[RMDB]
Background:
Structure probing data (2A3 and DMS) for a 177-nucleotide construct. The RNA was probed in 150 mM KOAc, 10 mM MgCl2 and 150 mM bicine (pH 8.5) at 24 C. The data come from the RNA Mapping Database (RMDB), library OK1LIB.
RNA sequence: GGGAACGACUCGAGUAGAGUCGAAAAUGGCGGUCUCUGGCAAAUUGGUCCGUAAUUGGGCUAGAAGGGUGCCUGGCUUUGCCGCAGGUUGCCUGGGAGGGUCCCAUAGCGGGUGGGUGCCUGGUGGCGAUAUAUUAAAUUUCGAUUUAAUAUAUCGAAAAGAAACAACAACAACAAC
Reactivity to 2A3 in 0.01 (KOAc 150mM, MgCl2 10mM, bicine 150mM(pH8.5), 24C), signal-to-noise 8, nucleotides 027 to 126: u080g030g010c020g010g060u030c030u010c020u070g050g000c020a040a060a150u120u090g030g000u020c000c000g020u040a040a090u110u140g010g000g000c010u010a050g040a060a050g070g030g030u040g000c010c010u030g090g000c000u080u080u160g040c020c010g010c010a000g020g000u110u160g020c000c000u010g010g010g050a180g010g010g020u030c020c000c010a010u060a030g040c040g010g040g090u190g030g010g020u050g020c010c010u060g070g040u060g030g010
Reactivity to DMS in 0.01 (KOAc 150mM, MgCl2 10mM, bicine 150mM(pH8.5), 24C), signal-to-noise 9, nucleotides 027 to 126: u020g000g010c010g010g010u010c040u010c040u010g010g020c040a050a070a130u040u020g000g020u000c000c010g010u010a120a110u060u070g000g010g000c000u000a030g010a130a160g010g000g020u010g000c010c010u000g000g010c070u010u010u040g010c050c050g010c080a030g000g000u000u010g050c010c010u000g000g010g000a100g000g000g000u010c020c000c010a090u020a080g020c090g000g000g000u030g000g000g000u010g000c020c020u000g000g020u010g010g020